[RMDB]
RNA sequence: GGGAACGACUCGAGUAGAGUCGAAAAGUGUGCUAUACUAGUAAGGUUGAAUGAAUCAACCCUUGAUGCUUAGCUUCUUUCACCAAGCAUAUUACACGCGGAUAACCGCCAAAGGAGAAAAGAUGAACUGCCCGACGAUUCUUCGGAAUCGUCGGAAGAGUGAUAAUACGUUCGCGUAUUAUCACUCAAAAGAAACAACAACAACAAC
Reactivity to 2A3 in 0.01 (KOAc 150mM, MgCl2 10mM, bicine 150mM(pH8.5), 24C), signal-to-noise 8, nucleotides 027 to 156: g050u060g010u030g030c030u060a040u050a210c080u050a060g090u100a100a150g030g010u030u010g030a100a160u160g070a100a150u090c010a010a010c000c020c000u010u080g050a030u070g020c030u060u070a020g010c000u050u010c010u030u090u070c060a090c090c010a030a020g030c040a040u060a060u170u210a090c060a030c070g020c010g040g010a090u070a270a200c000c020g000c030c040a070a090a030g090g030a060g060a030a100a030a020g060a040u130g050a080a070c050u090g020c010c000c000g000a000c000g000a010u000u010c000u020u020c060g000g000a000a000u000c000g000u000c000g000g000a000a000
Reactivity to DMS in 0.01 (KOAc 150mM, MgCl2 10mM, bicine 150mM(pH8.5), 24C), signal-to-noise 3, nucleotides 027 to 156: g030u000g020u000g000c030u000a080u010a120c130u010a170g010u000a100a080g000g010u000u000g010a070a140u010g020a240a190u000c020a050a080c000c000c020u020u000g010a060u000g000c020u000u000a020g010c030u000u000c050u010u010u000c060a090c020c010a020a080g010c040a050u000a050u000u000a080c040a080c160g020c020g000g000a190u000a080a120c040c000g010c030c070a030a050a090g010g000a170g000a120a060a080a090g010a140u000g010a070a090c070u000g000c070c000c010g010a020c000g020a020u000u000c000u000u000c300g040g010a040a000u000c010g010u000c000g000g020a010a010
This 207-nucleotide RNA was probed chemically with 2A3 and DMS. For DMS, 5,968 sequencing reads were counted. For DMS the reverse transcriptase was MarathonRT. The RNA was probed in 150 mM KOAc, 10 mM MgCl2 and 150 mM bicine (pH 8.5) at 24 C. For 2A3, 7,223 sequencing reads were counted.